[RMDB]
RNA sequence: GGGAACGACUCGAGUAGAGUCGAAAAACUGAUACCUUAAGAGGUAUCAGAAUGACUUCGUGGUAGAGCGCCACGAACGGAAAAUAAAGAAAGCUCGAUUGAAACGCACCGUGUACGCACGGUGCGAAAAAGUCGAUCCAGUUCGCUGGAUCGACAAGAGGAAUUUAAGGUUCGCCUUAAAUUCCUCAAAAGAAACAACAACAACAAC
Reactivity to 2A3 in 0.01 (KOAc 150mM, MgCl2 10mM, bicine 150mM(pH8.5), 24C), signal-to-noise 1, nucleotides 027 to 156: a000c000u000g000a000u000a000c000c010u080u070a200a000g130a020g300g000u010a000u000c000a000g000a040a040u110g040a050c040u000u000c000g010u010g000g020u060a210g040a000g000c000g020c000c000a000c010g010a020a000c020g040g020a010a020a010a050u070a040a000a030g100a040a050a000g000c010u000c020g100a170u010u220g070a130a130a010c000g000c000a020c000c000g000u010g020u030a040c180g020c010a000c020g030g110u020g030c000g010a010a020a000a000a000g000u000c000g000a000u010c000c010a000g000u050u070c140g120c040u000g000g000a000u000c000g000a000c000a010a010
This 207-nucleotide RNA was probed chemically with 2A3. Conditions: 150 mM KOAc, 10 mM MgCl2 and 150 mM bicine (pH 8.5), 24 C. Source: RMDB library M2RFPK, as collected in RNAgym. 2A3 adducts were read by reverse transcription with SuperScript II with manganese.